[RMDB]
About this RNA: This 177-nucleotide RNA was probed chemically with DMS and 2A3. DMS adducts were read by reverse transcription with MarathonRT. It was measured as part of the RMDB library OK2TST.
RNA sequence: GGGAACGACUCGAGUAGAGUCGAAAAGAACUACUCUUCUGGCUAGAGUUUACAGUUGCUAGAGGUUGCUUUUAUGGUUCGCUCAUGUGGCUCUGGUACAUAGUUGCUUUCGGAAAUAGUAUCAUCCCUUAUACUGCGUAUUCGUACGCAGUAUAAGAAAAGAAACAACAACAACAAC
Reactivity to DMS in 0.01 (KOAc 150mM, MgCl2 10mM, bicine 150mM(pH8.5), 24C), signal-to-noise 9, nucleotides 027 to 126: g000a110a090c030u010a070c080u000c060u010u000c040u010g010g020c080u010a070g000a120g010u000u000u010a080c150a120g010u010u000g010c040u000a050g010a090g010g010u000u000g010c090u000u010u010u000a100u010g020g010u000u000c100g010c060u010c050a070u010g010u000g010g010c020u010c030u010g010g000u000a040c070a080u000a090g010u000u000g010c070u000u000u000c090g010g000a040a040a070u000a070g010u010a070u000c050a080u000c020c020
Reactivity to 2A3 in 0.01 (KOAc 150mM, MgCl2 10mM, bicine 150mM(pH8.5), 24C), signal-to-noise 6, nucleotides 027 to 126: g020a020a000c020u060a020c010u050c000u100u020c040u040g060g010c050u060a040g000a040g130u060u140u230a080c030a060g030u140u050g070c030u040a020g000a040g080g050u110u050g030c030u100u150u050u150a120u190g050g020u030u040c030g030c030u050c040a060u090g040u050g070g010c000u010c020u020g010g020u040a040c020a040u160a070g050u060u070g020c020u060u100u080c040g040g040a030a080a030u110a050g050u030a020u140c010a050u080c020c000